[RMDB]
RNA sequence: GGGAACGACUCGAGUAGAGUCGAAAAUUAUCCAGAGUUUUUUGAAGCAUUGAACGAGCGUAAUAUUGAAGUUUAUACCUUUGAUCAGAGAGGUUUUGGUCAUUCAAGAAAGGGAGGUCCAAAGAAACAUCAUUAUAUCAUUCGUGAUAUAAUGAUGAAAAGAAACAACAACAACAAC
Reactivity to 2A3 in 0.01 (KOAc 150mM, MgCl2 10mM, bicine 150mM(pH8.5), 24C), signal-to-noise 4, nucleotides 027 to 126: u040u010a030u050c020c010a030g050a040g140u030u060u010u090u090u190g050a050a000g020c030a020u020u100g020a070a020c030g010a050g030c040g030u070a070a070u130a130u110u080g030a060a000g020u010u140u120a090u050a050c010c010u010u030u090g060a050u090c040a010g050a000g010a030g160g000u030u040u060u040g020g020u030c020a040u040u060c030a040a070g020a110a040a000g060g010g010a020g010g020u000c020c010a040a100a020g080a020a100a000
Reactivity to DMS in 0.01 (KOAc 150mM, MgCl2 10mM, bicine 150mM(pH8.5), 24C), signal-to-noise 9, nucleotides 027 to 126: u010u010a080u010c020c020a160g000a190g010u000u010u000u000u000u000g010a080a110g010c050a070u000u000g010a060a060c070g010a090g020c070g010u010a050a080u000a080u000u000g000a060a090g010u000u000u010a080u010a120c210c010u000u000u000g010a070u010c120a070g010a090g010a070g010g010u000u000u000u000g010g000u010c050a070u000u000c070a040a070g010a050a050a080g010g010g010a040g010g010u000c030c040a040a050a080g010a110a060a160